[RMDB]
RNA sequence: GGGAACGACUCGAGUAGAGUCGAAAAAUGGGCCCUACCGGGUUACUGACCUUAGCCAAACUCCGAAUGCCGGUAAGUGAGAGCGCGGCAGUGAGACUGUGGGGGAUAAGCUCCAUGGUCGAGAGGGAGCCCAGUUACUUUUCGAAGUAACUGGGCUAAAAGAAACAACAACAACAAC
Reactivity to DMS in 0.01 (KOAc 150mM, MgCl2 10mM, bicine 150mM(pH8.5), 24C), signal-to-noise 1, nucleotides 027 to 126: a110u020g040g000g000c000c040c010u000a040c140c160g000g020g000u010u010a070c160u010g000a110c010c010u000u000a130g000c010c040a010a120a180c030u000c000c040g030a210a070u000g000c090c060g000g010u000a060a060g010u020g000a170g000a110g000c030g020c260g010g000c030a050g020u010g040a130g010a010c000u010g060u000g020g030g020g040g020a150u000a100a150g000c000u000c000c000a000u000g000g000u000c010g000a090g000a250g000g000g030
An RNA of 177 nucleotides, treated with DMS and read out base by base. DMS adducts were read by reverse transcription with MarathonRT. The reactions ran in a buffer of 150 mM KOAc, 10 mM MgCl2 and 150 mM bicine (pH 8.5), at 24 C. It was measured as part of the RMDB library OK2TRN. Reactivities are given for positions 27 through 126.